[RMDB]
RNA sequence: GGGAACGACUCGAGUAGAGUCGAAAAUUCGAGGCCCCUCUGCUGUAGCCACGCAGCAGCGUCUUGCCGGGUGCGUGGCCUUGUCUGCAGGCUUGAGACCCAGCGGGGCCGUCUGUGCCACGUGGGGUCCUCGCAGCUACUUCGGUAGCUGCGAGGAAAAAGAAACAACAACAACAAC
Reactivity to 2A3 in 0.01 (KOAc 150mM, MgCl2 10mM, bicine 150mM(pH8.5), 24C), signal-to-noise 2, nucleotides 027 to 126: u110u060c020g030a050g000g070c000c000c000c000u030c000u020g050c020u020g010u100a010g030c020c010a010c030g040c000a130g050c000a020g010c070g090u230c190u190u300g030c020c020g130g040g140u040g020c000g000u020g020g000c000c000u070u080g060u030c040u090g040c030a010g040g000c040u050u090g060a040g020a040c000c020c010a040g060c000g010g020g000g030c020c000g010u020c020u100g070u140g040c000c010a030c020g010u020g000g020g000g000
Reactivity to DMS in 0.01 (KOAc 150mM, MgCl2 10mM, bicine 150mM(pH8.5), 24C), signal-to-noise 2, nucleotides 027 to 126: u000u010c050g020a140g000g010c000c000c010c050u020c010u000g000c000u000g050u010a130g000c010c020a010c020g000c000a030g010c010a150g000c050g000u060c190u050u050g020c020c050g000g050g000u020g000c010g000u000g000g000c030c040u010u000g010u040c110u000g000c030a050g000g010c060u010u010g000a130g010a040c010c020c000a110g000c000g000g010g000g000c000c000g000u000c040u030g010u050g000c000c000a050c000g010u010g000g000g000g010